[RMDB]
RNA sequence: GGGAACGACUCGAGUAGAGUCGAAAAGGGGUCUUAGGGGGAGUACCGUAACGUUCUUGGAUUUACUGAAGCCUCCACGGUUGUCAGAACGGAGAAGGUACUGUGAACCCUAAGACGGAGGCACCCAAAUCCAGUACCUGUUCGCAGGUACUGGAAAGAAAAAUGUAGCGUUCGCGCUACAUUUUUCAAAAGAAACAACAACAACAAC
Reactivity to 2A3 in 0.01 (KOAc 150mM, MgCl2 10mM, bicine 150mM(pH8.5), 24C), signal-to-noise 1, nucleotides 027 to 156: g010g000g000g000u000c000u000u000a010g000g000g010g010g030a040g010u000a000c020c030g070u040a080a050c040g000u020u010c160u130u270g140g010a150u200u300u260a110c010u010g110a150a000g030c000c000u030c030c000a030c030g010g070u150u190g070u190c070a050g010a030a000c010g020g040a190g090a200a120g030g000u000a010c010u000g010u010g010a010a010c000c000c000u000a010a000g000a000c000g010g000a010g000g000c000a020c010c010c010a060a060a040u000c000c000a000g000u030a000c000c000u000g010u120u030c230g020c150a010g030g000u010a000c000u010g000g000a000a030a000